[RMDB]
RNA sequence: GGGAACGACUCGAGUAGAGUCGAAAAUCAACAUUUCCUCAAUCAAGUGCCUUUAAAUAGAGCUGCACAAACAGAUUGGCGGCAAAAGCGUAGAUCUUGUCACGAUUGAGACCAAUCCAGUAUUUCAGCCUUGUUUGCUUUGCAAUUACGGGUUGGACGUGAUAGUAUACUUCGGUAUACUAUCACGAAAAGAAACAACAACAACAAC
Reactivity to DMS in 0.01 (KOAc 150mM, MgCl2 10mM, bicine 150mM(pH8.5), 24C), signal-to-noise 3, nucleotides 027 to 156: u010c030a110a090c110a120u010u000u000c030c020u000c030a090a090u000c030a120a130g000u000g010c020c080u000u000u000a060a120a210u010a100g010a150g000c070u000g000c120a050c040a130a070a050c050a020g000a040u010u000g020g040c040g000g030c030a080a080a060a100g000c030g010u000a120g010a040u000c050u010u010g010u000c040a110c140g030a100u000u010g010a080g020a110c010c010a020a030u010c020c000a110g030u010a080u000u000u000c070a040g000c030c060u000u000g020u000u020u000g010c030u000u000u000g010c080a040a080u000u000a050c060g010g000g010u000u000g010g020a190
Reactivity to 2A3 in 0.01 (KOAc 150mM, MgCl2 10mM, bicine 150mM(pH8.5), 24C), signal-to-noise 9, nucleotides 027 to 156: u100c020a010a110c040a120u040u070u060c010c000u010c010a020a020u020c040a120a080g010u010g020c010c020u160u170u200a140a230a180u210a090g050a020g040c130u100g000c070a030c000a100a090a030c020a030g060a070u060u070g070g010c010g020g010c050a040a100a070a040g080c050g050u080a040g020a080u020c030u050u170g050u060c030a010c140g020a030u010u040g010a020g030a070c020c010a000a010u030c000c020a030g030u020a080u020u040u050c010a000g010c010c020u160u270g050u130u160u090g050c040u130u160u170g010c020a010a030u060u020a050c010g000g000g000u010u000g000g010a010